The record gives the reactivity of an RNA of 177 nucleotides to DMS and 2A3.
Source: RMDB library OK2TRN, as collected in RNAgym.
For 2A3 the reverse transcriptase was SuperScript II with manganese.
The reactions ran in a buffer of 150 mM KOAc, 10 mM MgCl2 and 150 mM bicine (pH 8.5), at 24 C.
[RMDB]
RNA sequence: GGGAACGACUCGAGUAGAGUCGAAAAAGUACGAAGCGCUCUGGCGCAUAAACCAUGACAACGACGUAGUGCGAGAGCACUACCAGAACGCGUACCAACGCGUCAAGGCCCAGCUGGCCGCAGUUGGUAUCCUAUACCGGUUCGCCGGUAUAGGAUAAAAAGAAACAACAACAACAAC
Reactivity to DMS in 0.01 (KOAc 150mM, MgCl2 10mM, bicine 150mM(pH8.5), 24C), signal-to-noise 6, nucleotides 027 to 126: a100g020u010a080c120g010a130a110g010c010g010c030u010c140u020g010g010c040g010c040a070u000a040a080a130c070c040a070u000g020a080c080a040a060c100g020a130c160g020u000a010g010u000g000c000g000a210g010a240g000c000a010c000u000a010c010c140a090g000a100a030c040g010c010g010u010a120c160c160a050a020c020g010c010g020u000c060a090a100g010g000c060c010c050a100g020c150u000g000g010c040c070g020c090a060g010u000u000g010g010
Reactivity to 2A3 in 0.01 (KOAc 150mM, MgCl2 10mM, bicine 150mM(pH8.5), 24C), signal-to-noise 4, nucleotides 027 to 126: a010g090u080a060c090g060a250a030g000c030g020c040u060c130u230g130g000c030g010c050a010u200a020a080a020c040c010a080u140g100a070c040a050a020c080g100a010c080g010u000a010g000u010g010c010g000a070g020a000g020c010a000c000u010a010c010c000a000g040a030a010c010g020c000g010u040a120c010c010a070a000c010g010c010g020u010c040a050a050g020g000c000c020c000a040g050c070u160g050g000c010c020g070c040a020g010u020u030g020g010